[RMDB]
RNA sequence: GGGAACGACUCGAGUAGAGUCGAAAAAGAGCUACAUAUUAGAUAGCUGUAUAAUCGUUCAAGUUACAUCAAAACAUCUUCAAUAUUUAUUACUUACUUUCCUUUCUAUUUGUCGGCUAGUUAUUGAUUGUAAAUUCGCAUUCGUGCGAAUUUACAAAAAAGAAACAACAACAACAAC
Reactivity to 2A3 in 0.01 (KOAc 150mM, MgCl2 10mM, bicine 150mM(pH8.5), 24C), signal-to-noise 1, nucleotides 027 to 126: a020g020a020g000c000u030a000c020a010u260a190u300u160a160g110a300u000a050g070c020u000g010u000a120u170a040a050u010c010g030u060u000c000a000a000g010u020u170a120c060a040u100c080a050a020a000a230c030a030u020c050u070u000c000a000a040u060a030u120u090u000a140u210u020a060c030u150u020a070c000u000u000u000c060c000u060u250u140c040u030a020u150u120u000g070u030c020g010g000c000u000a000g020u060u010a120u080u270g090a090
Reactivity to DMS in 0.01 (KOAc 150mM, MgCl2 10mM, bicine 150mM(pH8.5), 24C), signal-to-noise 1, nucleotides 027 to 126: a060g010a020g000c040u000a000c060a060u010a130u040u080a130g000a140u000a010g000c030u000g040u000a050u000a050a070u020c050g000u000u020c070a080a140g000u010u000a030c110a090u010c080a030a080a110a070c040a010u030c040u030u000c030a020a080u000a050u000u000u030a060u020u010a100c060u000u000a080c070u000u000u000c010c020u000u010u000c030u010a070u010u010u000g000u000c030g000g010c020u000a040g000u000u000a070u010u000g000a190
The record gives the reactivity of an RNA of 177 nucleotides to 2A3 and DMS. The reactions ran in a buffer of 150 mM KOAc, 10 mM MgCl2 and 150 mM bicine (pH 8.5), at 24 C. DMS adducts were read by reverse transcription with MarathonRT. 2A3 adducts were read by reverse transcription with SuperScript II with manganese.